The record gives the reactivity of an RNA of 177 nucleotides to 2A3. It was measured as part of the RMDB library RFM100. The reactions ran in a buffer of 150 mM KOAc, 10 mM MgCl2 and 150 mM bicine (pH 8.5), at 24 C. Values are in units of 0.01, from 0 to 300, in steps of 10.

RNA sequence: GGGAACGACUCGAGUAGAGUCGAAAAGUACUUAAUAGAGAGUGUGUAUGCAUGUGUGUGUGCUUGUGGUGGCUAUGGAAAGGGGGCACUGACUGGUGAUGCUGAUAUUGGAGUGCAUCUGAGGCUGUCGGUCUCGAUUCUUCGGAAUCGAGACCGAAAAAGAAACAACAACAACAAC
Reactivity to 2A3 in 0.01 (KOAc 150mM, MgCl2 10mM, bicine 150mM(pH8.5), 24C), signal-to-noise 1, nucleotides 027 to 126: g070u070a000c000u090u110a000a000u210a160g040a000g000a000g030u140g010u000g000u050a080u180g010c030a050u050g070u020g020u000g000u000g000u050g090c000u040u120g020u000g000g010u000g000g070c110u210a050u230g010g080a020a190a110g000g000g000g000g000c020a000c100u100g040a050c000u000g000g070u090g000a010u020g020c000u040g030a030u000a070u240u110g050g000a000g020u050g080c000a020u000c000u160g000a000g000g020c000u000g000